RNA sequence: GGGAACGACUCGAGUAGAGUCGAAAAGGGGGUCUCAAAGCUGCGCACAAAGUACGAGUCAGCCGAGGCAAAGCGCGCGCUGUGCACCGCCUACGACCUCUUCCUGGCAGACGAGCGCGUGCUGCCCAAGUCAUACAUAUUUCGAUAUGUAUGACUUAAAAGAAACAACAACAACAAC
Reactivity to DMS in 0.01 (KOAc 150mM, MgCl2 10mM, bicine 150mM(pH8.5), 24C), signal-to-noise 9, nucleotides 027 to 126: g010g010g000g010g010u000c010u000c090a070a150a140g010c010u000g010c050g010c040a050c060a100a120a140g020u010a070c080g000a100g010u000c030a200g010c030c060g010a100g020g000c030a050a080a080g010c010g010c010g010c020g010c030u000g010u000g020c060a070c070c090g010c010c010u000a130c280g000a050c080c040u000c040u000u000c020c020u000g010g010c040a040g000a070c070g000a090g010c080g010c030g020u000g000c000u000g000c010c010c100
Reactivity to 2A3 in 0.01 (KOAc 150mM, MgCl2 10mM, bicine 150mM(pH8.5), 24C), signal-to-noise 9, nucleotides 027 to 126: g020g010g000g000g000u010c010u000c020a040a030a000g000c010u020g000c030g010c070a020c030a070a190a020g080u140a090c050g030a030g080u080c030a010g010c010c030g060a090g040g030c050a110a090a020g020c010g000c010g000c000g010c030u030g010u040g030c030a020c040c030g000c000c000u030a050c050g040a040c000c020u040c000u050u020c010c010u010g010g020c020a020g030a110c060g060a040g100c070g000c020g060u070g020c010u010g000c010c000c000